The record gives the reactivity of an RNA of 177 nucleotides to DMS and 2A3. DMS adducts were read by reverse transcription with MarathonRT.

RNA sequence: GGGAACGACUCGAGUAGAGUCGAAAAUUGCGAUAAAUAAUCAAUCUCUUGGGGGUUAGAUUGAGCACUCCAAUUAAAAUUUUGUUCAAUAUCCGUAUUAGCAUAAAACGGAUAACGAUUAAAUACAAUCAAAGACUUAAUUCGUUAAGUCUUUGAUAAAAGAAACAACAACAACAAC
Reactivity to DMS in 0.01 (KOAc 150mM, MgCl2 10mM, bicine 150mM(pH8.5), 24C), signal-to-noise 4, nucleotides 027 to 126: u030u010g010c110g010a150u030a050a080a130u060a040a070u030c010a050a050u000c010u020c060u050u030g010g010g010g010g010u040u010a010g000a070u000u000g000a220g000c060a030c280u020c030c020a050a070u030u040a030a070a060a080u000u030u000u000g010u040u000c020a040a300u000a000u010c000c000g020u000a040u040u030a140g000c210a120u010a050a070a070a020c000g000g000a010u000a010a020c300g000a030u010u010a040a040a040u050a070c200a090
Reactivity to 2A3 in 0.01 (KOAc 150mM, MgCl2 10mM, bicine 150mM(pH8.5), 24C), signal-to-noise 8, nucleotides 027 to 126: u060u050g020c030g070a050u100a130a230a050u180a030a070u060c030a020a030u010c020u010c010u060u120g080g020g010g000g040u050u040a060g030a070u030u040g020a010g020c010a020c040u020c020c010a050a050u170u200a050a100a110a160u100u200u090u120g060u030u050c030a070a050u010a010u020c000c000g000u020a100u110u110a170g090c100a070u170a210a160a030a000c000g000g000a010u000a020a010c030g000a000u030u130a060a020a020u190a070c130a020